[RMDB]
RNA sequence: GGGAACGACUCGAGUAGAGUCGAAAAGCACUGCCUGUUUAUGGUGGUCGUUAAUGUCAAAACCAUAAAACCCGCGUUGGAUCGAGGAAGUUCUAUGAAACCGUAUCAUAGGAUAUGGGCGACGCAGCUAUAAUAAUAAAUUCGUUUAUUAUUAUAGAAAAGAAACAACAACAACAAC
Reactivity to DMS in 0.01 (KOAc 150mM, MgCl2 10mM, bicine 150mM(pH8.5), 24C), signal-to-noise 5, nucleotides 027 to 126: g030c050a160c100u010g000c020c020u000g020u010u020u020a020u000g000g030u000g010g000u010c060g010u020u040a080a060u070g000u020c040a060a100a100a040c040c010a030u010a030a010a070a100c040c030c010g010c040g020u000u000g000g000a030u010c010g000a110g000g010a110a180g010u010u000c010u000a020u000g000a040a070a120c140c200g000u020a070u000c010a040u000a030g000g000a010u000a060u020g000g000g020c010g000a030c060g000c070a100g010
Reactivity to 2A3 in 0.01 (KOAc 150mM, MgCl2 10mM, bicine 150mM(pH8.5), 24C), signal-to-noise 5, nucleotides 027 to 126: g010c000a020c100u070g000c000c000u120g080u220u100u090a060u140g000g000u020g050g010u010c020g050u080u190a140a070u200g040u110c020a090a110a120a080c030c010a010u050a020a060a020a050c010c030c010g000c000g020u040u050g010g000a020u040c020g030a030g040g060a120a040g010u000u000c010u000a020u010g010a090a050a060c080c080g080u130a080u090c010a010u030a010g000g020a010u020a040u200g020g010g000c020g000a010c020g000c020a010g020